[RMDB]
The data come from the RNA Mapping Database (RMDB), library OK2TST. This 177-nucleotide RNA was probed chemically with 2A3 and DMS. The 2A3 profile rests on 2,265 reads.

RNA sequence: GGGAACGACUCGAGUAGAGUCGAAAAUGGAUCAGUCCCCACUGAGCCUAACAUCACUAUUAAAACAGGGGCGAAACUUUUUAACCUCAUCCAGGGAGCUUUUCAAGCUCUUAACUCCACGACUCCACAAUGCUUGGUUAUUCGUAACCAAGCAUUGAAAAGAAACAACAACAACAAC
Reactivity to 2A3 in 0.01 (KOAc 150mM, MgCl2 10mM, bicine 150mM(pH8.5), 24C), signal-to-noise 2, nucleotides 027 to 126: u100g020g000a020u020c010a020g110u140c020c020c000c010a060c010u040g000a040g010c010c010u050a060a060c030a030u110c010a030c100u140a090u280u220a150a100a070a010c090a090g020g000g010g000c040g030a050a010a040c010u190u120u080u090u170a060a070c020c010u000c030a060u000c000c010a020g030g010g000a030g000c020u150u130u090u150c100a050a010g000c010u030c000u010u020a010a010c020u020c030c020a060c010g050a020c050u050c050c000a030
Reactivity to DMS in 0.01 (KOAc 150mM, MgCl2 10mM, bicine 150mM(pH8.5), 24C), signal-to-noise 4, nucleotides 027 to 126: u000g000g010a080u000c040a050g000u000c040c020c010c070a300c060u000g020a080g010c020c010u000a080a090c090a110u000c110a100c060u000a050u010u000a030a050a090a140c120a090g000g000g000g030c100g020a110a060a110c070u010u000u020u000u000a080a150c040c000u000c060a060u010c040c100a140g010g000g010a030g000c010u000u000u000u020c190a070a070g020c010u000c010u000u000a090a080c070u020c030c020a030c080g010a050c040u010c000c060a170